Notes: This 207-nucleotide RNA was probed chemically with 2A3 and DMS. The RNA was probed in 150 mM KOAc, 10 mM MgCl2 and 150 mM bicine (pH 8.5) at 24 C. Reactivities are given for positions 27 through 156. For DMS the reverse transcriptase was MarathonRT. For DMS, 2,368 sequencing reads were counted.
RNA sequence: GGGAACGACUCGAGUAGAGUCGAAAAUGGACUUUUUACAGUUCCUACUUAUCCGGUUUUAACGCUGUUUUAUUGGCGCAAAGGUUUACGGAUAAACACCUAAUAAUUAAACCUUUUGUGUGCGAAAAUUGGACGUUUAGGUUCGCCUAAACGUCAAGUUACUAAUGACCUUCGGGUCAUUAGUAACAAAAGAAACAACAACAACAAC
Reactivity to 2A3 in 0.01 (KOAc 150mM, MgCl2 10mM, bicine 150mM(pH8.5), 24C), signal-to-noise 3, nucleotides 027 to 156: u080g010g000a020c040u070u090u060u090u200a080c160a060g050u190u130c000c020u030a050c050u040u000a000u010c000c000g050g000u000u010u000u050a050a030c020g020c020u020g170u160u110u060u240a170u140u240g030g000c020g000c020a020a000a000g000g000u000u000u000a010c000g000g000a020u030a010a110a010c040a050c010c010u070a140a050u110a200a050u180u130a020a000a020c010c000u030u030u090u060g090u010g010u050g040c080g050a040a070a090a100u140u120g060g000a000c000g000u000u000u020a000g000g000u010u050c140g070c010c000u000a000a010a020c000g000u000c000a000a000
Reactivity to DMS in 0.01 (KOAc 150mM, MgCl2 10mM, bicine 150mM(pH8.5), 24C), signal-to-noise 1, nucleotides 027 to 156: u020g020g020a070c000u000u000u020u000u000a110c140a060g000u000u000c000c000u000a050c120u000u010a010u000c000c000g000g000u000u000u000u020a210a060c020g010c010u000g010u000u000u000u000a100u050u020g010g070c000g000c040a040a030a030g050g000u000u000u010a110c000g000g000a030u000a040a060a240c050a140c030c030u000a040a100u010a080a140u010u010a020a010a020c000c000u010u010u000u010g020u000g000u000g020c040g000a100a020a080a260u010u000g020g040a020c030g040u000u000u000a010g000g010u000u000c300g040c020c000u000a000a000a020c010g030u010c020a010a070